[RMDB]
Background
Structure probing data (DMS and 2A3) for a 177-nucleotide construct. Values are in units of 0.01, from 0 to 300, in steps of 10. The RNA was probed in 150 mM KOAc, 10 mM MgCl2 and 150 mM bicine (pH 8.5) at 24 C. The data come from the RNA Mapping Database (RMDB), library OK1LIB.
RNA sequence: GGGAACGACUCGAGUAGAGUCGAAAAAGCCUGAUCACGCUGGGUUUGGCAACUGCCGGGCUUGCCGACCGGGCAUCAAGCGGCCGGUUGUGGGCCAACCUGUGCGAUCGGCAGGUGCACCACGACCUAAAAAUGAAACCUUCGGGUUUCAUUUUUAAAAAGAAACAACAACAACAAC
Reactivity to DMS in 0.01 (KOAc 150mM, MgCl2 10mM, bicine 150mM(pH8.5), 24C), signal-to-noise 3, nucleotides 027 to 126: a150g000c020c000u030g000a050u000c030a040c040g020c020u020g010g010g000u020u040u030g000g000c000a250a030c000u000g000c000c000g000g000g010c040u000u020g020c080c050g000a140c150c100g010g000g000c120a150u040c130a060a080g000c040g000g010c010c000g000g000u010u000g000u030g000g000g010c030c010a030a010c020c000u000g000u000g010c030g010a010u010c090g010g000c020a010g000g000u000g030c150a150c040c020a100c130g000a060c080c040
Reactivity to 2A3 in 0.01 (KOAc 150mM, MgCl2 10mM, bicine 150mM(pH8.5), 24C), signal-to-noise 5, nucleotides 027 to 126: a000g020c020c010u070g010a120u050c030a010c050g020c010u030g000g010g060u080u140u140g040g000c010a040a040c050u030g000c020c000g010g040g000c010u020u040g010c010c010g140a270c090c070g090g030g010c030a100u110c030a070a060g040c050g220g090c030c000g000g010u010u040g020u070g090g150g000c000c000a010a010c000c000u020g020u040g030c020g070a100u030c020g010g000c000a010g000g020u070g030c050a050c040c010a040c030g070a070c000c040